[RMDB]
RNA sequence: GGGAACGACUCGAGUAGAGUCGAAAAUCGCGUUAGCCAAGUACUCGCAUCCAUCUCCGACCCCUCCCUCAAGGCGGUCAUCCAAGAAGAGGCCUACAAAUCCAUUCGGACCACACUGCAAGCCGCCGAUCACCACUCAGUUCGCUGAGUGGUGAUCAAAAGAAACAACAACAACAAC
Reactivity to DMS in 0.01 (KOAc 150mM, MgCl2 10mM, bicine 150mM(pH8.5), 24C), signal-to-noise 2, nucleotides 027 to 126: u000c000g010c010g010u000u030a020g050c000c060a100a030g010u000a070c080u000c030g010c070a050u010c000c020a110u000c090u010c070c000g000a140c190c030c010c030u000c090c020c000u000c040a060a050g030g040c010g000g000u000c160a100u020c020c040a160a110g000a070a090g000a080g000g000c020c010u000a060c150a030a090a020u020c030c120a080u030u000c040g000g000a100c080c020a050c000a020c060u000g000c090a090a220g000c000c020g000c090c000
Reactivity to 2A3 in 0.01 (KOAc 150mM, MgCl2 10mM, bicine 150mM(pH8.5), 24C), signal-to-noise 3, nucleotides 027 to 126: u090c010g010c020g060u070u120a040g070c030c040a090a020g050u070a100c040u020c050g030c010a050u000c030c000a050u030c040u000c030c000g050a040c000c000c000c000u050c000c010c000u080c080a030a020g040g010c020g000g020u050c020a040u000c020c000a000a050g050a050a030g050a060g040g020c010c010u060a050c080a010a110a010u020c020c010a060u120u090c030g010g040a080c000c020a050c010a020c020u050g010c020a010a050g050c010c000g020c000c030